[RMDB]
RNA sequence: GGGAACGACUCGAGUAGAGUCGAAAAGAUAUGGACCCUGAACUACUCGUAACGAGGGUCUCGGAAACGAGACCUACCCACCGACGAGCAGGGUCCUAAGUCAAACUAACGUCUUCGGACGUUAGAACCUUCUCUUUCCGUUCGCGGAAAGAGAAGGAAAAGAAACAACAACAACAAC
Reactivity to DMS in 0.01 (KOAc 150mM, MgCl2 10mM, bicine 150mM(pH8.5), 24C), signal-to-noise 1, nucleotides 027 to 126: g020a000u000a190u000g010g010a000c000c000c000u010g020a080a060c110u000a260c030u040c010g000u000a200a190c090g030a250g010g000g000u000c000u000c000g000g010a070a060a130c000g000a010g000a000c000c000u010a070c040c050c110a160c300c070g000a100c040g000a000g000c010a030g000g000g030u000c000c000u000a000a040g000u000c030a110a080a130c010u000a010a010c010g040u000c000u000u000c200g040g040a000c000g000u000u000a000g000a080a210
Reactivity to 2A3 in 0.01 (KOAc 150mM, MgCl2 10mM, bicine 150mM(pH8.5), 24C), signal-to-noise 2, nucleotides 027 to 126: g000a000u010a010u080g010g000a020c000c000c000u000g040a120a050c120u160a080c010u300c000g060u120a200a140c090g050a140g020g040g040u000c000u010c010g000g000a040a040a000c020g010a010g000a010c000c010u030a040c030c000c020a150c060c090g200a090c000g000a010g040c010a000g020g000g030u030c010c000u010a020a010g020u000c020a080a070a090c010u000a000a000c000g010u010c020u040u060c260g180g000a010c000g000u000u000a000g010a020a000